[RMDB]
RNA sequence: GGGAACGACUCGAGUAGAGUCGAAAAGUGAAGAGCACAUCCAAGUAGGCUACGCUUGCGUUCCCGUCUGAGAACGUAAGAAGAGAUGAACAGACUAGCUCUCGGAAGGCCCGCCCGCAGGCAAGAAGAUGAGUGAAACCAUAAAUAUGCAGGCUACGGCUUAUUACGAGUUCGCUCGUAAUAAGCCAAAAGAAACAACAACAACAAC
Reactivity to 2A3 in 0.01 (KOAc 150mM, MgCl2 10mM, bicine 150mM(pH8.5), 24C), signal-to-noise 2, nucleotides 027 to 156: g090u090g050a090a030g030a040g070c020a020c010a060u020c010c060a060a030g050u060a040g160g000c020u020a020c000g010c000u000u000g010c000g000u010u010c000c000c010g010u010c000u000g000a000g000a020a000c010g010u010a010a010g030a040a000g010a030g010a090u220g100a120a020c010a000g000a010c000u010a010g010c010u000c000u000c020g040g000a010a000g000g000c010c010c030g010c000c000c000g010c020a000g000g000c000a000a000g020a010a000g000a000u080g000a000g000u010g000a030a000a010c060c030a190u140a280a030a000u030a020u000g000c000a010g000g020c000u020a010c040
Structure probing data (2A3) for a 207-nucleotide construct.
The reactions ran in a buffer of 150 mM KOAc, 10 mM MgCl2 and 150 mM bicine (pH 8.5), at 24 C.
For 2A3, 1,564 sequencing reads were counted.